Chemical mapping of a 177-nucleotide RNA with 2A3 and DMS. Source: RMDB library OK2TST, as collected in RNAgym. As a SHAPE reagent, 2A3 marks flexible, mostly unpaired nucleotides at the ribose 2'-OH. Values cover nucleotides 27 to 126. DMS adducts were read by reverse transcription with MarathonRT.
RNA sequence: GGGAACGACUCGAGUAGAGUCGAAAAGUAUGUCGCGUGUGAGGUCGGCGGGUACACGCACGGCUCACGGCAGUCGGCACUGUUCUCCCACGACGACGGCAACCGUGGCGGGCACUACAUGGCGGUGACACCUUGGAGGUUUCGACCUCCAAGGUGUAAAAGAAACAACAACAACAAC
Reactivity to 2A3 in 0.01 (KOAc 150mM, MgCl2 10mM, bicine 150mM(pH8.5), 24C), signal-to-noise 1, nucleotides 027 to 126: g080u080a090u150g000u060c000g000c000g010u080g010u010g040a020g010g150u110c030g020g030c050g010g030g020u230a080c250a020c070g000c040a070c030g010g040c020u000c010a020c000g000g040c050a050g050u110c000g010g000c000a000c030u010g080u090u020c040u030c000c000c000a020c070g060a010c000g010a010c000g000g070c070a080a040c030c040g010u050g020g000c010g040g010g000c000a000c020u080a040c040a100u050g070g000c030g000g030u040g030
Reactivity to DMS in 0.01 (KOAc 150mM, MgCl2 10mM, bicine 150mM(pH8.5), 24C), signal-to-noise 1, nucleotides 027 to 126: g020u000a050u010g020u000c040g030c000g020u000g020u020g010a040g010g020u010c050g030g010c000g000g000g010u000a040c180a130c030g020c010a100c000g020g000c000u000c030a040c080g020g050c090a070g010u000c010g020g040c070a070c070u000g010u000u000c090u010c010c020c040a140c080g010a070c030g000a080c080g010g010c050a070a080c060c040g020u010g000g040c010g020g010g000c040a060c070u010a060c070a090u000g000g030c030g000g030u000g010